[RMDB]
RNA sequence: GGGAACGACUCGAGUAGAGUCGAAAAGGGGUCGUUAGACAAGUCGAAUAUUGUCAGAAGUCCACGCUGAAGCCUCCACGGCGUGGAUACUUCUUGGAUUUAUAUUCGUCACCCUAACGACGGAGGCACCCAAAAGGUGAAAGUUCGCUUUCACCAACACUGUUCCAAUGUUCGCAUUGGAACAGUGAAAAGAAACAACAACAACAAC
Reactivity to 2A3 in 0.01 (KOAc 150mM, MgCl2 10mM, bicine 150mM(pH8.5), 24C), signal-to-noise 5, nucleotides 027 to 156: g100g010g040g000u000c010g000u000u010a010g010a030c080a120a080g020u020c000g010a010a000u010a030u030u070g090u100c180a110g010a010a000g020u000c000c000a000c000g010c000u010g010a070a020g020c000c000u000c010c000a010c010g000g010c000g000u010g000g000a010u040a040c000u000u020c000u080u300g150g000a010u060u160u060a020u050a010u000u000c010g030u080c040a090c020c000c000u000a010a000c010g000a000c000g000g000a000g000g000c000a030c010c000c000a040a100a020a050g000g000u000g010a000a000a010g030u090u170c270g070c100u000u000u000c000a000c000c000a000a000
Reactivity to DMS in 0.01 (KOAc 150mM, MgCl2 10mM, bicine 150mM(pH8.5), 24C), signal-to-noise 2, nucleotides 027 to 156: g000g000g030g050u000c010g000u000u000a000g000a070c060a030a150g020u000c010g010a030a040u000a040u010u000g010u000c010a110g020a030a030g010u010c000c030a010c010g020c010u010g000a050a120g000c010c010u000c010c030a300c040g010g020c010g040u000g000g000a010u000a000c020u000u010c010u000u000g070g000a060u000u000u000a010u000a030u030u000c010g000u000c040a100c130c050c000u000a000a010c020g010a040c020g020g040a050g020g050c150a110c040c010c010a050a050a130a170g000g010u000g000a030a010a040g030u000u000c300g040c030u010u000u000c000a020c010c020a040a130